[RMDB]
RNA sequence: GGGAACGACUCGAGUAGAGUCGAAAAGAUAUGGACAUCGGGCAGAACUACUCGAUCGGAAACGAUACCGAGCUGUCUCUAGCGUGUGUCCUAAGUCAAAACGAAGAGUUGUUCGCAACUCUUCGAAGCCUAAGUAUCUGUUCGCAGAUACUUAGGCAAAAGAAACAACAACAACAAC
Reactivity to DMS in 0.01 (KOAc 150mM, MgCl2 10mM, bicine 150mM(pH8.5), 24C), signal-to-noise 6, nucleotides 027 to 126: g000a060u000a300u010g000g000a010c000a000u000c090g040g000g020c030a040g000a040a050c010u000a120c000u000c000g020a040u000c000g000g010a110a100a180c020g010a020u000a060c230c020g000a030g020c020u000g010u010c100u000c030u000a110g020c060g000u010g020u000g000u010c000c000u010a040a100g000u000c060a060a060a110a180c030g010a020a000g010a010g000u000u000g000u010u010c230g020c000a000a010c000u000c000u000u000c000g010a030a070
Reactivity to 2A3 in 0.01 (KOAc 150mM, MgCl2 10mM, bicine 150mM(pH8.5), 24C), signal-to-noise 6, nucleotides 027 to 126: g020a020u080a050u130g000g000a000c020a040u110c120g000g120g030c030a010g010a040a020c050u100a030c000u140c000g010a010u000c000g010g040a050a070a020c010g000a010u090a200c120c070g000a010g020c030u020g020u030c060u010c040u240a100g080c270g210u180g010u000g000u030c000c000u030a120a040g060u010c040a000a000a090a140c020g000a000a000g000a000g010u010u020g010u020u030c100g020c100a010a010c000u010c000u020u000c000g000a020a000